RNA sequence: GGGAACGACUCGAGUAGAGUCGAAAAUAUUAUAGCGCACUAAAGACGCUGAUCUUUAGUUACCAUGGAACUUUAGUGCUGAGGUCCGAGUUCCAAGGUCCCAUGUCGGACCUUAGCACUAAUUGAAGCAAGAUGAACGAUUCGUCGUUCAUCUUGCAAAAGAAACAACAACAACAAC
Reactivity to 2A3 in 0.01 (KOAc 150mM, MgCl2 10mM, bicine 150mM(pH8.5), 24C), signal-to-noise 1, nucleotides 027 to 126: u100a020u080u190a140u120a090g040c090g020c040a030c070u020a000a010a000g010a000c000g110c300u100g070a250u020c000u000u000u000a000g000u000u050a090c040c040a140u100g110g040a030a110c000u050u000u000a000g000u000g000c000u000g020a000g000g000u000c000c000g020a040g040u130u110c120c020a080a040g050g040u020c020c000c020a010u110g040u000c010g010g020a000c040c000u010u010a000g000c040a020c000u000a000a000u020u040g170a070a000
Reactivity to DMS in 0.01 (KOAc 150mM, MgCl2 10mM, bicine 150mM(pH8.5), 24C), signal-to-noise 1, nucleotides 027 to 126: u000a070u000u040a140u020a100g050c070g030c150a060c000u010a020a020a020g010a020c020g030c220u000g000a030u000c000u000u000u000a010g010u000u000a000c130c070a100u000g000g000a110a180c070u000u000u000a000g030u000g020c000u000g000a010g000g010u000c000c000g020a050g000u000u000c280c160a030a030g050g000u000c010c000c010a240u000g030u020c010g010g030a000c000c000u000u000a000g010c000a040c000u000a000a000u000u000g010a110a100